[RMDB]
RNA sequence: GGGAACGACUCGAGUAGAGUCGAAAACUGCAGAUCAGCACGUUGUCAAAGAGGCAUAUCCUGAGCCCGAGUCCAUUCCCACAGAAUAUGUGGAGCAUGAACUACUUGGACAAUCAUCUGCUGAGCAGCUACCUCGUCAUUUCGAUGACGAGGUAGCAAAAGAAACAACAACAACAAC
Reactivity to 2A3 in 0.01 (KOAc 150mM, MgCl2 10mM, bicine 150mM(pH8.5), 24C), signal-to-noise 4, nucleotides 027 to 126: c010u070g020c000a050g020a270u040c020a000g020c000a000c050g010u000u010g040u020c040a080a040a030g190a080g000g030c040a050u070a040u230c020c070u140g040a010g000c000c000c010g000a010g010u000c010c010a000u010u010c000c060c000a000c000a000g180a160a170u280a100u220g010u000g010g020a090g050c030a010u020g000a020a010c010u070a010c010u070u090g060g000a000c000a000a040u070c030a030u020c020u000g000c000u000g020a000g000c000a000
Reactivity to DMS in 0.01 (KOAc 150mM, MgCl2 10mM, bicine 150mM(pH8.5), 24C), signal-to-noise 1, nucleotides 027 to 126: c000u010g000c000a100g000a300u000c000a040g000c070a080c190g000u000u000g010u000c000a110a010a030g000a300g020g000c000a100u000a060u080c020c020u050g020a090g000c000c000c100g000a020g000u030c000c000a070u000u000c000c000c080a020c010a020g000a260a110u120a070u000g000u010g000g040a050g030c040a010u050g000a020a040c020u010a300c000u020u050g010g000a020c040a000a000u000c010a120u000c050u000g060c020u000g030a000g000c000a100